[RMDB]
RNA sequence: GGGAACGACUCGAGUAGAGUCGAAAAUUUUCACGCGAUGAGAAAAAACAAGAUGACAUUCGAAAAAAAUAUAAUAAUUCAAAAUUAAAGUUCUACAUUGGUGAUGUGCGUGAUAGUCAAAGUGUAGGGUAUAUAUUCGUUUCGACGAAUAUAUACCAAAAGAAACAACAACAACAAC
Reactivity to DMS in 0.01 (KOAc 150mM, MgCl2 10mM, bicine 150mM(pH8.5), 24C), signal-to-noise 1, nucleotides 027 to 126: u030u030u000u000c010a020c020g010c000g060a100u050g050a170g000a030a080a060a100a010a070c100a140a090g000a090u050g000a170c040a060u000u010c020g000a120a000a030a180a120a090a300u040a210u000a130a080u100a060a060u030u040c050a010a040a060a090u090u050a050a210a130g000u050u010c000u010a020c000a010u000u000g040g050u000g000a020u000g000u000g000c080g030u000g000a010u000a040g000u000c020a060a000a000g070u000g010u000a030g000
Reactivity to 2A3 in 0.01 (KOAc 150mM, MgCl2 10mM, bicine 150mM(pH8.5), 24C), signal-to-noise 2, nucleotides 027 to 126: u030u050u000u040c000a010c000g010c030g060a060u080g050a050g120a130a130a000a070a100a030c170a020a070g120a090u190g050a080c080a110u070u170c130g050a070a020a000a000a000a100a110u300a090u090a230a000u190a070a040u290u110c020a030a030a190a110u090u180a090a250a000g000u040u100c010u020a020c000a010u030u070g050g060u150g160a050u070g020u030g020c020g000u010g000a030u000a030g020u000c000a000a110a000g030u010g010u010a030g110